[RMDB]
RNA sequence: GGGAACGACUCGAGUAGAGUCGAAAACUCGAAUGAGGUGUGUUGACGUCGGGGGAAACCCUCCUGUGUACCAGCGGGAUAGAGAGAAAGACAAAGACCGGAAAACAAACUAAAGCGCCCUUGUGGCGUAACAACAGAUGUUCGCAUCUGUUGUUACAAAAGAAACAACAACAACAAC
Reactivity to DMS in 0.01 (KOAc 150mM, MgCl2 10mM, bicine 150mM(pH8.5), 24C), signal-to-noise 9, nucleotides 027 to 126: c030u000c020g010a100a100u030g000a080g010g020u000g010u010g020u000u000g010a220c190g010u000c050g000g000g010g000g000a120a100a140c030c000c010u010c010c000u010g010u000g010u030a100c120c090a150g010c050g000g000g000a040u010a040g010a220g010a120g010a050a050a060g010a050c040a050a140a120g000a050c030c030g010g020a050a050a070a070c130a050a060a110c150u020a060a070a100g000c050g010c010c000c020u020u020g010u020g010g010c030
Reactivity to 2A3 in 0.01 (KOAc 150mM, MgCl2 10mM, bicine 150mM(pH8.5), 24C), signal-to-noise 7, nucleotides 027 to 126: c020u020c020g050a070a140u170g010a070g060g050u100g010u020g010u040u060g040a050c050g010u010c010g010g010g000g000g030a020a060a050c000c000c000u010c000c010u020g010u010g010u070a110c040c020a020g010c010g000g000g030a020u070a020g110a000g010a000g020a050a070a010g020a020c010a020a110a000g030a020c020c020g040g020a040a080a020a040c060a060a050a020c030u180a150a060a050g040c030g010c010c010c000u060u160g110u200g020g000c020